[RMDB]
RNA sequence: GGGAACGACUCGAGUAGAGUCGAAAAACUGCCAUACGUGGCAGUAACACGCCUUACCAGGACUAAACAGCGUGUCUAAAAAACAGUCCUUCAUACCUGAUCUGGAGGGUAGAUCAGGAAUACUAAAAAAAUCGGGUGAAGUUCGCUUCACCCGAAAGAGAAAUUAGCUGUUCGCAGCUAAUUUCUCAAAAGAAACAACAACAACAAC
Reactivity to 2A3 in 0.01 (KOAc 150mM, MgCl2 10mM, bicine 150mM(pH8.5), 24C), signal-to-noise 2, nucleotides 027 to 156: a000c000u010g010c010c010a020u030a050c170g060u030g000g000c000a000g000u000a000a000c010a010c000g000c000c000u020u050a010c030c080a010g000g000a000c000u050a100a050a000c010a010g000c000g010u000g010u030c110u090a010a010a010a000a000a000c050a000g010u000c020c010u010u100c070a070u090a140c000c000u000g000a010u010c010u030g060g040a070g050g060g060u070a010g000a010u010c030a000g050g000a000a010u120a070c080u120a040a030a000a020a010a020a160u040c000g000g000g000u000g010a000a010g010u060u150c170g010c100u000u000c000a000c000c000c000g000a000a000a000
The record gives the reactivity of an RNA of 207 nucleotides to 2A3. Reactivities are given for positions 27 through 156. It was measured as part of the RMDB library M2RFOK. The reactions ran in a buffer of 150 mM KOAc, 10 mM MgCl2 and 150 mM bicine (pH 8.5), at 24 C. 2A3 adducts were read by reverse transcription with SuperScript II with manganese. For 2A3, 2,144 sequencing reads were counted.